Structure probing data (DMS and 2A3) for a 177-nucleotide construct. DMS adducts were read by reverse transcription with MarathonRT. The data come from the RNA Mapping Database (RMDB), libraries RFM100 and RFMREP. The reactions ran in a buffer of 150 mM KOAc, 10 mM MgCl2 and 150 mM bicine (pH 8.5), at 24 C.
RNA sequence: GGGAACGACUCGAGUAGAGUCGAAAACAAAGGCACAGCAAAGUCCUCGUAGCAUCUUUAGGGAUUACGCGAGGACCAGAACUUUUAACACAAAUGUAAGAAAUUUUACCAAGGAAUCCCUUUACUUAAGAACGAUUAUGUUCGCAUAAUCGUUCUUAAAAGAAACAACAACAACAAC
Reactivity to DMS in 0.01 (KOAc 150mM, MgCl2 10mM, bicine 150mM(pH8.5), 24C), signal-to-noise 1, nucleotides 027 to 126: c110a050a150a090g000g000c070a000c090a000g000c070a290a070a080g000u000c000c050u000c010g000u000a120g000c300a040u000c000u020u030u000a140g030g000g000a000u000u030a020c110g000c000g000a020g000g000a000c000c100a060g040a150a090c020u000u000u030u000a090a080c130a050c080a130a070a040u000g000u010a090a070g080a030a020a050u020u010u020u000a080c050c030a070a110g000g040a160a010u000c050c000c030u000u040u090a040c050u000u060
Reactivity to 2A3 in 0.01 (KOAc 150mM, MgCl2 10mM, bicine 150mM(pH8.5), 24C), signal-to-noise 4, nucleotides 027 to 126: c040a010a080a040g050g050c080a020c090a110g050c030a100a060a020g010u000c000c000u000c000g020u010a060g070c050a020u020c030u080u130u110a110g030g060g000a010u050u080a030c050g000c000g040a000g000g000a000c000c010a000g010a020a030c010u030u050u140u260a100a040c050a020c020a100a110a110u140g030u110a090a030g120a090a190a040u130u210u080u080a100c060c030a040a030g040g020a100a000u020c010c000c000u060u100u010a120c050u000u000